Background
Structure probing data (DMS and 2A3) for a 177-nucleotide construct. The RNA was probed in 150 mM KOAc, 10 mM MgCl2 and 150 mM bicine (pH 8.5) at 24 C. Values cover nucleotides 27 to 126. It was measured as part of the RMDB libraries RFM100 and RFMREP.
RNA sequence: GGGAACGACUCGAGUAGAGUCGAAAAUUUCAGUGCCUUAAGAGGCUAACACAGAAGGGUAAACUAAGUCUCCAUAAAACCCAGAGAAGAGAUGGUAAAACUCCUCUUUGGAUCCUGUCUGGAGUCAGUAAGCUACAUCAUUCGUGAUGUAGCUUACAAAAGAAACAACAACAACAAC
Reactivity to DMS in 0.01 (KOAc 150mM, MgCl2 10mM, bicine 150mM(pH8.5), 24C), signal-to-noise 4, nucleotides 027 to 126: u030u020u000c060a100g030u010g010c020c010u000u000a140a120g010a100g000g000c070u000a090a100c070a080c120a090g010a070a080g010g020g020u020a050a050a100c110u010a100a110g000u020c000u000c010c010a040u010a040a090a120a110c160c010c000a000g010a010g010a040a040g000a020g010a060u020g010g010u040a050a070a120a110c000u000c000c020u010c000u000u000u000g010g000a070u010c040c040u000g000u020c180u010g000g000a050g000u010c050a090
Reactivity to 2A3 in 0.01 (KOAc 150mM, MgCl2 10mM, bicine 150mM(pH8.5), 24C), signal-to-noise 5, nucleotides 027 to 126: u040u050u080c070a050g070u030g090c000c010u060u070a130a060g100a030g120g040c040u070a100a010c110a000c020a090g130a120a100g070g020g020u160a060a080a000c010u030a060a050g030u020c010u000c000c000a020u090a080a140a030a020c000c000c000a000g000a000g020a090a000g010a010g020a060u200g060g160u160a050a110a050a020c010u020c010c000u000c000u000u000u010g010g010a020u050c000c000u110g020u040c040u020g010g000a010g030u000c010a000